Conditions: 150 mM KOAc, 10 mM MgCl2 and 150 mM bicine (pH 8.5), 24 C. Chemical mapping of a 177-nucleotide RNA with DMS and 2A3. For 2A3, 3,232 sequencing reads were counted. 2A3 adducts were read by reverse transcription with SuperScript II with manganese. For DMS, 1,764 sequencing reads were counted.
[RMDB]
RNA sequence: GGGAACGACUCGAGUAGAGUCGAAAAGAUAUGGAGUACCGAGGGACAUGCUGACUGAUCGGAAACGAUCAGGCAGCAACAGCCCUGGUACUCCUAAGUCAAAUCCAUAAUGUUCGCAUUAUGGAAAGUCUAUUGUUGGGUUCGCCCAACAAUAGACAAAAGAAACAACAACAACAAC
Reactivity to DMS in 0.01 (KOAc 150mM, MgCl2 10mM, bicine 150mM(pH8.5), 24C), signal-to-noise 1, nucleotides 027 to 126: g000a020u000a020u030g000g010a010g030u000a000c000c000g000a030g020g020g000a020c150a120u010g020c000u000g000a040c000u000g000a010u000c010g010g000a000a030a020c000g000a020u000c010a020g000g000c010a010g000c000a020a000c130a190g000c000c000c000u010g010g010u000a010c000u000c000c000u010a000a090g000u000c000a100a180a270u000c000c000a010u000a000a000u000g030u000u020c300g000c020a020u020u040a010u000g000g000a040a070a110
Reactivity to 2A3 in 0.01 (KOAc 150mM, MgCl2 10mM, bicine 150mM(pH8.5), 24C), signal-to-noise 1, nucleotides 027 to 126: g010a000u010a000u050g000g000a000g030u020a020c070c090g090a100g000g020g000a060c180a300u300g000c050u010g000a010c020u030g010a010u010c000g000g000a010a010a000c000g010a000u010c000a000g050g000c010a000g020c000a000a010c020a020g010c000c000c000u000g000g000u000a000c010u000c000c000u000a010a000g000u000c020a060a040a220u000c000c000a000u000a020a010u000g050u050u080c300g040c170a010u000u040a030u010g000g050a050a020a040